[RMDB]
RNA sequence: GGGAACGACUCGAGUAGAGUCGAAAAAACCUUUAUAUAUUGCUGAUGUAAUAAGACAAAACUCAUUAUAAGCUUGAAACUCUCACCAUGUUCUUGCUUUCUCCUUCAUCUCUCAAAUGCUUUGCCAAAUUAACCACAUCAACUAAUUUUACAGAAACACUAAUAAAUGGUUCGCCAUUUAUUAGUGAAAAGAAACAACAACAACAAC
Reactivity to 2A3 in 0.01 (KOAc 150mM, MgCl2 10mM, bicine 150mM(pH8.5), 24C), signal-to-noise 4, nucleotides 027 to 156: a000a010c110c000u130u100u010a300u030a060u030a030u050u110g010c010u030g000a060u070g030u070a100a050u070a150a060g060a030c070a020a100a050a030c030u060c040a040u020u150a060u080a150a020g000c020u040u050g050a100a050a030c010u030c040u020c080a050c060c030a050u050g030u020u030c010u000u030g000c000u000u030u020c020u050c050c000u070u070c040a100u020c020u000c010u010c040a070a090a100u070g030c020u090u060u010g020c010c020a070a080a130u110u040a070a070c040c020a020c020a100u090c020a070a020c010u110a070a150u060u120u150u110a070c050a010g100a000a060a000
Reactivity to DMS in 0.01 (KOAc 150mM, MgCl2 10mM, bicine 150mM(pH8.5), 24C), signal-to-noise 1, nucleotides 027 to 156: a120a120c000c000u000u000u000a140u000a180u020a170u020u010g010c040u010g010a190u000g010u000a080a090u000a080a080g020a060c000a050a080a160a160c050u010c010a070u010u010a090u000a070a090g000c030u000u000g000a140a060a060c050u010c000u000c050a030c090c010a090u010g030u010u000c060u000u000g010c040u040u010u010c030u000c010c050u000u000c070a080u020c040u010c030u010c030a060a020a110u000g000c100u000u000u000g020c000c000a040a060a120u010u000a090a070c050c110a070c040a110u000c040a020a110c060u010a050a080u000u000u000u010a140c050a130g010a250a080a270

Source information:
An RNA of 207 nucleotides, treated with 2A3 and DMS and read out base by base. Values are in units of 0.01, from 0 to 300, in steps of 10. The 2A3 profile rests on 2,214 reads. High DMS reactivity at an A or C suggests that its Watson-Crick edge is free.